[RMDB]
RNA sequence: GGGAACGACUCGAGUAGAGUCGAAAAACCGGAGGCCGACAAUCCAGGGAACCGGAUGUCAUCACGUUGUUGCAGUACCAGAUGGCAUCUUAAAUCCGAUCUGCAAAUAAGCAUGUAGAAAGCUGAUGUGGGCUUUAGCUGGACGGGGGUUCAAUUCACUGUUGCUAAAGUUCGCUUUAGCAACAGUAAAAGAAACAACAACAACAAC
Reactivity to DMS in 0.01 (KOAc 150mM, MgCl2 10mM, bicine 150mM(pH8.5), 24C), signal-to-noise 1, nucleotides 027 to 156: a070c040c020g040g010a060g000g060c080c020g000a110c070a120a190u010c010c050a070g020g000g010a070a060c080c130g000g020a000u000g030u000c000a040u010c020a230c260g060u000u000g010u000u000g020c020a110g050u010a050c080c110a160g000a010u010g020g020c010a040u010c010u010u000a120a070a150u010c010c070g000a110u010c050u000g010c020a070a050a140u000a040a110g000c050a100u010g000u010a090g020a140a070a120g020c040u000g010a080u000g050u020g000g010g040c050u010u010u000a020g020c030u000g010g000a070c050g000g030g040g000g050u000u010c050a040a030u000u000c020